[RMDB]
An RNA of 177 nucleotides, treated with 2A3 and read out base by base. Source: RMDB library OK1LIB, as collected in RNAgym.
RNA sequence: GGGAACGACUCGAGUAGAGUCGAAAAGCUCUGAGAGACAGAUCGAACAACAAAGAGACAUCGAAAAUCUUAGGGGAGAGAACGAAUCUGUCGUCUUCUCUAGGACAUUGUCGAUCAGAUGUCCAAAGACGUUUCAUUGCUUCGGCAAUGAAACGUCAAAAGAAACAACAACAACAAC
Reactivity to 2A3 in 0.01 (KOAc 150mM, MgCl2 10mM, bicine 150mM(pH8.5), 24C), signal-to-noise 1, nucleotides 027 to 126: g010c000u000c000u010g010a010g010a000g000a050c000a010g120a080u060c080g040a090a030c010a000a000c000a000a230a000g060a060g030a020c000a040u000c000g090a120a060a000a000u030c000u000u000a000g010g000g130g000a050g000a000g000a040a100c030g040a120a190u160c130u300g090u080c000g030u030c000u000u000c060u000c000u000a000g000g000a020c020a100u050u120g060u010c000g000a000u000c000a000g020a040u120g000u000c000c080a040a000a000
Background
Reactivities are rounded to 0.1 and cut off at 0 and 3.